[RMDB]
RNA sequence: GGGAACGACUCGAGUAGAGUCGAAAAUAGGCGAACGAGAGGCCCUCUCUUGUGCGGAGUUGUCACGCUGACAAAAUUGUUAUGAUGUCCGAUUCCGGUAGCAUCGCGGCGAUGCUUUCAUAGGACAUCUUAUGAACCCAAGGGCUUCGGGGAAGCAACGUAUAAAUGGCUUCGGCCAUUUAUACGUAAAAGAAACAACAACAACAAC
Reactivity to 2A3 in 0.01 (KOAc 150mM, MgCl2 10mM, bicine 150mM(pH8.5), 24C), signal-to-noise 2, nucleotides 027 to 156: u130a030g040g020c020g070a040a040c050g010a030g000a000g070g010c010c000c000u060c000u000c010u050u160g080u120g020c070g010g030a090g050u080u040g050u100c070a040c090g020c080u040g020a050c060a010a090a090a140u120u130g070u140u110a040u120g000a000u000g000u000c030c020g030a070u170u010c100c050g070g030u030a000g000c010a000u010c030g060c100g280g070c140g000a010u000g000c010u040u090u060c030a060u060a100g000g020a000c000a000u010c000u000u020a040u030g030a020a040c000c000c020a080a060g020g000g010c000u040u020c010g000g000g000g020a090a040g070c050a060